[RMDB]
RNA sequence: GGGAACGACUCGAGUAGAGUCGAAAAACUAGGAGCGCACAACUCUCUAAGACUGUACGACAGUCUGUCUCUCUAGCACGCUUGUUCAACGAGAGAGAGAGAGCGUUGGAACAAGUGUGCAACGAAAGUUGCUAUCAAAUUUCGAUUUGAUAGCAACAAAAGAAACAACAACAACAAC
Reactivity to 2A3 in 0.01 (KOAc 150mM, MgCl2 10mM, bicine 150mM(pH8.5), 24C), signal-to-noise 9, nucleotides 027 to 126: a010c080u070a050g010g030a020g020c050g040c060a020c030a180a130c030u020c000u000c010u040a050a020g010a000c010u040g110u160a050c070g060a030c080a000g000u000c010u030g030u000c100u000c000u000c040u040a020g000c000a000c000g000c000u000u010g000u000u010c000a010a000c010g000a010g010a020g000a010g010a000g010a010g010a210g030c010g000u000u020g150g020a010a000c000a000a000g000u000g000u000g000c010a010a010c050g050a020a040a020
Reactivity to DMS in 0.01 (KOAc 150mM, MgCl2 10mM, bicine 150mM(pH8.5), 24C), signal-to-noise 7, nucleotides 027 to 126: a100c190u000a070g010g010a080g010c020g010c190a080c130a090a110c020u000c010u000c050u000a090a080g010a010c000u000g000u010a090c130g000a300c300a010g010u000c000u000g010u000c050u000c000u000c050u000a250g000c000a010c020g010c010u010u010g000u000u000c010a020a020c020g000a080g000a130g000a110g000a090g000a050g010a020g000c010g010u000u010g020g020a010a020c030a020a010g000u000g010u000g000c000a030a030c220g000a040a070a090
Source: RMDB library M2PK90, as collected in RNAgym. An RNA of 177 nucleotides, treated with 2A3 and DMS and read out base by base. The reactions ran in a buffer of 150 mM KOAc, 10 mM MgCl2 and 150 mM bicine (pH 8.5), at 24 C.